An RNA of 207 nucleotides, treated with DMS and 2A3 and read out base by base. The 2A3 profile rests on 1,999 reads. Conditions: 150 mM KOAc, 10 mM MgCl2 and 150 mM bicine (pH 8.5), 24 C. Values cover nucleotides 27 to 156. For 2A3 the reverse transcriptase was SuperScript II with manganese.

[RMDB]
RNA sequence: GGGAACGACUCGAGUAGAGUCGAAAAAGGUUCGCUGUGGUGCAACUCUUAUUAGUAACUAAUCCAAAGCAAGUAUAGCAGAACAGGUUUUUAACUAUUUUUAGGCAGAUAAAAAAUAGUAUUUGACAAAAUCGAUUGUCGUUCGCGACAAUCGAAAGUUAUGAAUUAACUUCGGUUAAUUCAUAACAAAAGAAACAACAACAACAAC
Reactivity to DMS in 0.01 (KOAc 150mM, MgCl2 10mM, bicine 150mM(pH8.5), 24C), signal-to-noise 1, nucleotides 027 to 156: a070g000g000u010u000c080g010c020u000g000u000g040g040u010g000c020a050a080c050u000c030u000u000a150u000u020a080g030u010a050a100c050u000a170a080u010c110c080a050a080a090g000c010a020a020g010u000a060u010a030g010c000a060g000a020a040c120a170g030g000u040u000u000u000u000a020a070c020u000a030u020u000u000u020u000a060g050g030c020a100g030a120u020a010a000a010a010a010a010u010a010g020u000a140u000u020u000g000a080c120a070a050a070a200u000c020g010a020u000u010g010u000c000g040u000u000c300g020c000g010a010c010a020a010u000c000g000a000a000a050
Reactivity to 2A3 in 0.01 (KOAc 150mM, MgCl2 10mM, bicine 150mM(pH8.5), 24C), signal-to-noise 3, nucleotides 027 to 156: a000g050g000u030u030c020g000c020u020g040u050g050g010u020g000c020a020a090c000u010c020u090u160a200u040u040a060g050u020a080a050c060u040a100a060u040c110c050a060a010a010g010c000a000a000g000u010a000u020a030g000c010a010g020a020a020c050a080g040g030u050u000u030u000u010a030a000c010u010a020u000u010u010u010u020a020g020g000c050a020g100a240u190a030a010a020a000a020a020u000a000g000u010a070u090u100u160g040a020c010a000a140a030a110u070c000g000a000u010u000g000u000c010g000u030u030c170g010c010g100a000c000a000a000u000c010g010a010a000a000